[RMDB]
RNA sequence: GGGAACGACUCGAGUAGAGUCGAAAAGGUUUGUGUUUAAUUCGUUAAACACAAACCCUGCCAAGUAGAAAAGUUGGUGCUUAGACCACGCCCUCUACCGUAAUAAUAGAUAAAUAGGCGACAUGCCUAGUGCAAUUGUUCGCAAUUGCACUAGGAACAAACGGAGGCUUUUCGAAGCCUCCGUUUGAAAAGAAACAACAACAACAAC
Reactivity to 2A3 in 0.01 (KOAc 150mM, MgCl2 10mM, bicine 150mM(pH8.5), 24C), signal-to-noise 1, nucleotides 027 to 156: g000g030u000u000u010g010u000g000u030u000u000a030a030u040u070c110g070u050u010a010a010a010c000a000c010a000a000a000c000c000c000u000g030c000c000a080a100g000u000a000g020a020a040a010a000g000u160u060g030g000u050g060c170u250u150a050g030a030c000c020a000c000g000c000c010c010u030c000u050a030c020c020g070u030a030a070u050a160a000u050a300g070a010u100a100a220a010u180a100g010g010c070g040a020c060a030u080g040c000c010u010a010g010u000g010c020a010a010u000u000g010u020u080c300g000c110a000a000u000u000g030c000a000c000u000a000g010g000a000a030
The record gives the reactivity of an RNA of 207 nucleotides to 2A3. For 2A3 the reverse transcriptase was SuperScript II with manganese. The RNA was probed in 150 mM KOAc, 10 mM MgCl2 and 150 mM bicine (pH 8.5) at 24 C.